[RMDB]
RNA sequence: GGGAACGACUCGAGUAGAGUCGAAAACGACGGCCAAGCGCUGGUCCAGGACGAGGGCAGCCAGUUAGUCGCCCGAGCAUUGACCCUGGCGCCAGUCGACGGCGAUACCGGACGGUGGCUGGACCUGCAGUCCUUCUACUUUCGAGUAGAAGGACUGAAAAGAAACAACAACAACAAC
Reactivity to 2A3 in 0.01 (KOAc 150mM, MgCl2 10mM, bicine 150mM(pH8.5), 24C), signal-to-noise 2, nucleotides 027 to 126: c010g080a000c030g060g000c040c010a060a040g060c030g000c080u030g000g030u020c040c010a040g020g030a040c040g040a090g000g010g030c030a020g030c020c030a100g110u100u200a040g050u130c020g000c010c000c000g020a050g020c070a160u090u200g090a100c020c020c020u040g000g020c040g000c000c010a020g020u060c010g010a030c050g040g000c030g000a020u040a060c020c000g030g040a040c020g000g080u040g010g000c020u020g020g030a110c010c010u040g020
Reactivity to DMS in 0.01 (KOAc 150mM, MgCl2 10mM, bicine 150mM(pH8.5), 24C), signal-to-noise 4, nucleotides 027 to 126: c100g010a130c130g020g020c030c040a080a140g000c080g000c000u000g000g010u010c010c040a020g000g010a160c050g010a190g000g000g020c010a080g030c020c100a090g020u020u010a110g020u000c060g010c030c010c030g000a200g020c220a180u000u010g000a070c120c030c030u010g010g020c130g010c010c020a040g010u000c030g010a100c140g010g010c070g010a100u020a110c060c020g010g010a040c070g000g010u000g000g010c010u000g000g000a080c020c050u010g010
Annotation: Chemical mapping of a 177-nucleotide RNA with 2A3 and DMS. The data come from the RNA Mapping Database (RMDB), library OK2TST. The DMS profile rests on 3,168 reads. DMS adducts were read by reverse transcription with MarathonRT. The 2A3 profile rests on 3,378 reads. 2A3 adducts were read by reverse transcription with SuperScript II with manganese.